[RMDB]
RNA sequence: GGGAACGACUCGAGUAGAGUCGAAAAUCAUGCGUGUGUCCAGUAGACGGUCAUAUCGGUAUCCAGUGAUUGCUCGUCUUUGGUAUCGAUACGAGCAAAUCCAACGCGUUCAAACUGGACAAUAUCGUCAAUUUCAGCAUCGGUCAGAUCAGGUUCAUACUAGCAUCUGGUUCGCCAGAUGCUAGUAAAAAGAAACAACAACAACAAC
Reactivity to DMS in 0.01 (KOAc 150mM, MgCl2 10mM, bicine 150mM(pH8.5), 24C), signal-to-noise 2, nucleotides 027 to 156: u010c050a110u000g020c110g030u020g030u010g010u010c010c000a000g010u020a130g020a060c050g020g030u000c110a110u000a070u000c050g040g000u000a040u010c040c050a120g040u010g040a170u000u010g010c070u000c080g010u000c020u000u010u000g020g010u000a060u000c060g020a100u000a020c020g000a060g010c020a040a040a110u010c040c030a120a060c090g020c060g020u000u000c100a060a080a110c030u000g000g010a030c030a050a080u000a030u000c020g000u000c190a050a140u000u000u010c020a140g010c020a090u000c040g030g000u000c020a070g020a050u000c020a090g020g030u000u000c030a270
Reactivity to 2A3 in 0.01 (KOAc 150mM, MgCl2 10mM, bicine 150mM(pH8.5), 24C), signal-to-noise 5, nucleotides 027 to 156: u150c040a050u170g000c030g020u080g020u010g010u030c000c010a000g000u020a020g030a020c010g040g020u100c070a080u100a070u210c060g100g000u110a040u080c050c030a060g030u050g130a020u020u040g020c020u030c060g070u020c030u040u050u080g100g050u150a060u150c040g020a020u010a040c030g010a030g010c050a060a050a020u050c030c000a080a020c050g050c010g170u060u050c040a210a150a050c000u000g000g010a000c000a000a010u060a060u040c050g060u040c040a050a110u020u060u100c060a050g040c020a050u050c050g100g040u070c060a050g010a140u040c030a020g090g000u090u080c020a010